Background:
An RNA of 177 nucleotides, treated with 2A3 and DMS and read out base by base. In probing experiments dimethyl sulfate is read out at A N1 and C N3, which are open when not base-paired. The reactions ran in a buffer of 150 mM KOAc, 10 mM MgCl2 and 150 mM bicine (pH 8.5), at 24 C. It was measured as part of the RMDB library M2PK50.
[RMDB]
RNA sequence: GGGAACGACUCGAGUAGAGUCGAAAAUUCGCGUGAUUCGUCACGCGAAGAUUACCGAGAACCGUGCUCGGUAUAAACAUGGAACCCUUGGAAAGAAGGGAAAUAGGCAGGCCUUCGGGCCUGCCAAGUUAAGUACCGUAUUCGUACGGUACUUAACAAAAGAAACAACAACAACAAC
Reactivity to 2A3 in 0.01 (KOAc 150mM, MgCl2 10mM, bicine 150mM(pH8.5), 24C), signal-to-noise 3, nucleotides 027 to 126: u000u000c000g000c010g000u000g020a010u020u070c140g020u000c140a010c000g000c000g010a000a000g000a010u010u040a030c000c010g000a000g000a040a100c090c030g050u120g040c000u000c000g010g020u010a010u020a010a010a000c020a030u080g110g040a080a110c000c020c000u010u020g170g300a230a120a090g050a030a020g050g010g040a020a070a010u080a050g000g000c000a010g000g020c000c030u070u140c230g050g010g000c000c000u000g000c000c000a010a010
Reactivity to DMS in 0.01 (KOAc 150mM, MgCl2 10mM, bicine 150mM(pH8.5), 24C), signal-to-noise 4, nucleotides 027 to 126: u000u000c000g030c000g050u000g010a020u000u000c230g010u000c000a010c000g010c000g000a000a000g010a140u010u000a080c000c000g010a010g010a100a200c080c080g010u010g000c010u010c000g000g010u010a000u010a040a080a080c180a070u020g010g000a150a160c010c000c000u000u000g010g010a140a120a140g010a010a010g000g000g010a020a080a080u010a070g000g030c000a000g010g010c000c000u010u010c210g020g020g000c000c000u010g000c000c000a000a010